[RMDB]
RNA sequence: GGGAACGACUCGAGUAGAGUCGAAAACGCUCAACUCCUGGAGCGCAAAACAUGGGAGAAAAGCACUGGAAACAGUGCAAAGAGCUGAGGAUUACCUCAGCAAAGGAUCAGCGAAAAGCUGAUCCAAACUGGCGGUAGUCUUCGGACUACCGCCAGUAAAAGAAACAACAACAACAAC
Reactivity to 2A3 in 0.01 (KOAc 150mM, MgCl2 10mM, bicine 150mM(pH8.5), 24C), signal-to-noise 2, nucleotides 027 to 126: c000g000c000u020c020a060a020c010u000c000c000u010g050g050a000g000c140g000c070a000a000a080a150c000a050u100g000g000g000a000g000a080a000a000a000g010c020a000c000u010g060g000a070a000a000c030a000g000u010g010c000a090a000a000g060a000g000c010u000g000a000g010g050a110u130u250a130c030c030u000c000a000g000c000a020a020a020g000g000a000u010c010a000g010c050g100a120a090a210a000g010c000u000g000a000u000c000c000a030a000
This 177-nucleotide RNA was probed chemically with 2A3.
2A3 is a SHAPE reagent: it acylates the 2'-hydroxyl of flexible nucleotides of all four kinds.
For 2A3, 1,192 sequencing reads were counted.
The RNA was probed in 150 mM KOAc, 10 mM MgCl2 and 150 mM bicine (pH 8.5) at 24 C.